The data come from the RNA Mapping Database (RMDB), library TTRDEL.
This 177-nucleotide RNA was probed chemically with 2A3 and DMS.
The RNA was probed in 150 mM KOAc, 10 mM MgCl2 and 150 mM bicine (pH 8.5) at 24 C.
[RMDB]
RNA sequence: GGGAACGACUCGAGUAGAGUCGAAAAGAUAUGGAGCCGAGUAUGGAGUACGCAAAUUCGGAAACGAACUCGUACGUACUAUGAAGUACGUGGCUCCUAAGUCAAAAUCUAGGGUUCGCCCUAGAAAGCUGAUAUCCCUGUUCGCAGGGAUAUCAGCAAAAGAAACAACAACAACAAC
Reactivity to 2A3 in 0.01 (KOAc 150mM, MgCl2 10mM, bicine 150mM(pH8.5), 24C), signal-to-noise 1, nucleotides 027 to 126: g000a000u030a010u080g000g000a010g010c070c010g030a030g040u000a030u040g070g050a040g040u000a000c000g020c080a000a090a080u040u020c010g010g000a000a000a030c000g000a020a010c000u040c090g090u300a150c000g000u000a000c010u040a300u210g040a050a030g000u000a000c010g040u050g000g000c010u000c000c000u010a000a000g020u000c000a030a000a010a300u000c000u010a000g000g040g000u010u060c240g200c000c000c010u010a000g010a040a010a010
Reactivity to DMS in 0.01 (KOAc 150mM, MgCl2 10mM, bicine 150mM(pH8.5), 24C), signal-to-noise 1, nucleotides 027 to 126: g010a040u010a300u060g000g000a050g010c030c020g000a080g030u000a000u020g000g000a010g040u010a000c010g020c100a010a090a290u000u020c000g000g010a080a040a210c020g000a020a000c120u010c220g030u010a140c030g020u000a020c080u020a260u010g010a100a260g020u000a010c000g010u010g000g000c000u000c000c000u030a010a120g000u000c030a050a110a060a110u000c000u020a000g010g000g030u000u040c300g040c000c000c000u000a000g000a040a090a090